[RMDB]
RNA sequence: GGGAACGACUCGAGUAGAGUCGAAAAAGACUUGGCGUGUUUCUGUCGUUCUUAGUAUAGCAUAUUUAUAAUGCGCUUACAUUUUCUUGCCAUGAAGAUAACAAUAUAUUGCUAAGAGUAAUUUCAUACAUACCUAGAGUUUCGACUCUAGGUAUGUAAAAGAAACAACAACAACAAC
Reactivity to DMS in 0.01 (KOAc 150mM, MgCl2 10mM, bicine 150mM(pH8.5), 24C), signal-to-noise 4, nucleotides 027 to 126: a080g000a060c040u000u000g010g000c090g030u020g000u010u010u000c080u000g000u010c050g020u000u000c000u010u000a070g010u010a060u010a050g020c010a040u000a070u030u040u030a090u030a090a030u000g010c050g000c060u010u000a080c150a080u010u010u010u010c030u020u010g020c130c090a080u010g010a050a060g000a030u010a050a110c150a060a050u020a080u010a090u000u000g010c010u000a030a090g010a110g010u020a070a080u020u000u030c050a150u010
Reactivity to 2A3 in 0.01 (KOAc 150mM, MgCl2 10mM, bicine 150mM(pH8.5), 24C), signal-to-noise 8, nucleotides 027 to 126: a000g040a020c030u040u050g040g020c040g050u100g060u040u090u070c050u020g040u040c030g000u020u030c000u000u010a040g020u090a050u050a040g020c020a010u040a060u080u140u060a160u140a200a070u090g010c070g000c050u060u080a050c020a110u060u080u060u040c050u070u060g060c040c020a030u090g020a020a030g040a100u130a120a030c040a100a020u110a040u040a060u180u150g020c030u070a050a010g010a010g060u070a060a110u050u050u040c030a020u010